Chemical mapping of a 177-nucleotide RNA with DMS.
The DMS profile rests on 2,081 reads.
DMS adducts were read by reverse transcription with MarathonRT.
The data come from the RNA Mapping Database (RMDB), library TTRINS.
Conditions: 150 mM KOAc, 10 mM MgCl2 and 150 mM bicine (pH 8.5), 24 C.
RNA sequence: GGGAACGACUCGAGUAGAGUCGAAAAGAUAUGGAUUCCGAAGAACUUGGCCACAGUAGACGAAUCACCGGUCGGAAACGACCGAGUGAAAUGUGUCUACUGUGGCCAAGGGAGGAAUCCUAAGUCAGAAUAUCCUAGUGUUCGCACUAGGAUAUUCAAAAGAAACAACAACAACAAC
Reactivity to DMS in 0.01 (KOAc 150mM, MgCl2 10mM, bicine 150mM(pH8.5), 24C), signal-to-noise 2, nucleotides 027 to 126: g010a080u010a300u000g000g000a020u000u000c000c010g020a130a240g020a130a270c000u000u000g010g000c000c000a000c000a000g010u000a000g010a030c000g020a300a180u000c010a000c000c020g000g000u010c000g000g000a090a120a250c010g000a020c000c000g000a070g000u010g010a020a030a070u010g030u020g000u000c000u000a000c000u010g010u000g000g000c000c020a000a000g000g020g000a070g000g020a010a020u000c000c000u010a010a080g000u010c100a170